[RMDB]
RNA sequence: GGGAACGACUCGAGUAGAGUCGAAAAUUCACUAUGUUGGCCAAGCUGGUCUUGAACUCCCAGCCUCAAGUGAUCCACCCACGUUGGCCUCCCAAAGCUCUGGGAUUACAGAUGUGAGCCACUGCGCCCUGCUGGAGUAUUUUCGAUCCAAGAGAAACUAAUCCCUAAUGUUCGCAUUAGGGAUUAGAAAAGAAACAACAACAACAAC
Reactivity to 2A3 in 0.01 (KOAc 150mM, MgCl2 10mM, bicine 150mM(pH8.5), 24C), signal-to-noise 2, nucleotides 027 to 156: u070u050c030a000c050u080a090u140g070u040u080g110g000c010c010a020a030g010c040u030g020g080u070c040u060u110g080a090a020c040u040c020c030c000a010g020c000c020u060c030a060a020g040u040g050a030u040c040c040a030c080c020c000a040c070g070u040u020g030g020c000c000u020c010c020c000a080a100a010g030c030u000c020u070g020g010g000a020u060u110a070c050a010g050a020u130g110u040g090a020g040c030c000a080c060u090g000c030g030c060c010c000u030g000c000u020g010g030a040g020u110a080u020u080u010u050c040g030a060u060c040c000a080a000g150a010g060a240a020a010
Reactivity to DMS in 0.01 (KOAc 150mM, MgCl2 10mM, bicine 150mM(pH8.5), 24C), signal-to-noise 2, nucleotides 027 to 156: u000u000c010a060c000u000a120u000g010u010u000g020g030c030c020a050a120g010c040u020g000g000u010c030u010u010g010a080a130c040u010c050c030c020a130g020c060c030u000c050a050a090g030u000g040a070u000c050c090a130c060c000c000a090c300g070u000u010g010g020c020c020u000c010c010c010a070a070a150g020c080u000c050u000g020g010g010a080u000u000a110c050a090g030a090u000g020u000g020a100g020c010c030a060c050u000g040c040g000c010c030c000u000g040c000u000g010g000a110g000u000a060u010u000u000u000c040g010a060u000c030c030a040a090g000a130g020a140a090a200